RNA sequence: GGGAACGACUCGAGUAGAGUCGAAAACGCAAAAAGUCUCAACAGCCCAUUCACUGAUUGACCAGCUGGAUAUUAUCAAUGAAAUGGCGUCACCAAUGCUGGAGCAAAUCUUCGUUGGCUCGAAACCGCGUGAGUGAUAAUUCGUUAUCACUCACGCAAAAGAAACAACAACAACAAC
Reactivity to 2A3 in 0.01 (KOAc 150mM, MgCl2 10mM, bicine 150mM(pH8.5), 24C), signal-to-noise 5, nucleotides 027 to 126: c070g020c070a110a100a050a040a040g070u050c050u020c060a050a180c010a060g030c000c000c030a050u080u070c040a050c100u060g020a090u090u070g040a060c030c060a020g100c060u090g060g010a040u050a050u260u120a080u130c070a070a070u150g090a100a040a040u070g030g000c020g050u050c050a020c040c020a100a020u150g020c040u020g030g020a030g000c000a020a080a120u040c030u090u040c080g040u040u050g040g000c020u010c070g070a060a100a050c020c010
Reactivity to DMS in 0.01 (KOAc 150mM, MgCl2 10mM, bicine 150mM(pH8.5), 24C), signal-to-noise 3, nucleotides 027 to 126: c050g000c120a000a080a140a040a070g020u020c100u000c090a140a110c140a120g020c020c080c040a090u000u000c010a040c020u000g000a040u020u000g000a160c000c010a160g030c060u010g010g010a050u040a060u030u040a030u010c000a030a040u000g020a060a040a030u010g000g010c030g020u000c040a220c020c010a030a070u010g020c060u000g000g000a070g010c140a030a080a080u000c090u010u000c100g000u020u060g000g000c070u020c070g020a030a180a090c200c150
Background
The record gives the reactivity of an RNA of 177 nucleotides to 2A3 and DMS. The RNA was probed in 150 mM KOAc, 10 mM MgCl2 and 150 mM bicine (pH 8.5) at 24 C.